[RMDB]
RNA sequence: GGGAACGACUCGAGUAGAGUCGAAAAGAUAUGGACGACGUAGGGCGAUAAGCUGGUAUCGGAAACGAUACCCAGCUUUUGACGCCUCAAGUCGUCCUAAGUCAAAAGAACUUCUUCGGAAGUUCAACUAGUUGAGGUACUUCGGUACCUCAACUAGAAAAGAAACAACAACAACAAC
Reactivity to DMS in 0.01 (KOAc 150mM, MgCl2 10mM, bicine 150mM(pH8.5), 24C), signal-to-noise 2, nucleotides 027 to 126: g010a030u030a300u000g000g040a050c000g030a000c000g000u000a250g000g000g000c000g010a150u000a000a010g010c000u000g000g000u010a030u000c000g010g000a080a130a220c000g010a010u010a000c180c110c070a000g000c000u000u000u000u000g000a250c090g010c020c000u010c030a260a300g000u000c000g010u030c000c000u010a000a100g010u010c020a070a090a110a160g000a030a030c000u010u010c010u000u000c300g010g010a000a010g030u000u000c000a130a300